[RMDB]
RNA sequence: GGGAACGACUCGAGUAGAGUCGAAAAGAUAUGGAGCUGUUUAGGGAGUCCUUUGUUCGGAAACGAACAUUGGACUUUGAUCUAACUGCAGCUCCUAAGUCAAAACCAGCUUGUUCGCAAGCUGGAAGAUAUAGGACAGCUUCGGCUGUCCUAUAUCAAAAGAAACAACAACAACAAC
Reactivity to DMS in 0.01 (KOAc 150mM, MgCl2 10mM, bicine 150mM(pH8.5), 24C), signal-to-noise 2, nucleotides 027 to 126: g010a010u010a150u010g000g010a010g010c000u000g010u000u010u010a030g000g000g020a000g010u000c010c000u010u010u010g010u000u000c000g000g000a060a040a080c000g010a020a010c000a010u000u000g010g000a020c010u000u000u010g000a050u000c000u000a010a050c300u000g010c040a010g000c000u010c000c010u000a000a070g000u010c020a160a070a200a200c000c000a010g010c000u000u000g000u000u010c270g010c000a010a010g000c000u010g000g000a020a040
Reactivity to 2A3 in 0.01 (KOAc 150mM, MgCl2 10mM, bicine 150mM(pH8.5), 24C), signal-to-noise 1, nucleotides 027 to 126: g000a000u020a030u080g000g000a020g020c000u010g030u120u040u050a030g000g000g030a020g010u000c020c000u020u000u010g010u010u020c000g040g020a060a020a010c010g020a000a010c010a000u000u000g000g010a010c010u020u050u010g000a000u000c000u000a000a040c030u130g050c040a020g020c000u020c000c000u000a000a000g000u030c020a020a050a050a180c000c000a000g010c000u040u000g040u160u260c300g000c200a010a000g040c000u010g000g020a010a020

Conditions: 150 mM KOAc, 10 mM MgCl2 and 150 mM bicine (pH 8.5), 24 C. Chemical mapping of a 177-nucleotide RNA with DMS and 2A3. For 2A3 the reverse transcriptase was SuperScript II with manganese.